[RMDB]
RNA sequence: GGGAACGACUCGAGUAGAGUCGAAAAGAUAUGGAAAUGUCUACGGGAAUGUACCAACAACAGCGCACUGAGUCGGAAACGACUUUGCGACAUGUUGCGUACAUUCCCGUAGACAUUUCCUAAGUCAUCUCGUAAAUAUCUUCGGAUAUUUACGAGAAAAAGAAACAACAACAACAAC
Reactivity to DMS in 0.01 (KOAc 150mM, MgCl2 10mM, bicine 150mM(pH8.5), 24C), signal-to-noise 4, nucleotides 027 to 126: g010a060u010a300u020g000g010a000a000a000u000g010u000c000u000a010c010g000g020g010a040a000u000g000u000a000c020c010a090a030c000a020a080c150a130g000c010g020c030a030c300u020g020a000g020u000c000g000g000a160a110a240c010g010a010c010u000u000u000g000c000g000a090c090a120u010g000u000u010g000c190g000u000a000c000a020u000u000c000c000c000g000u010a000g000a000c000a010u000u000u000c000c000u000a000a070g010u000c040a150
Conditions: 150 mM KOAc, 10 mM MgCl2 and 150 mM bicine (pH 8.5), 24 C. The record gives the reactivity of an RNA of 177 nucleotides to DMS. Values cover nucleotides 27 to 126. DMS adducts were read by reverse transcription with MarathonRT.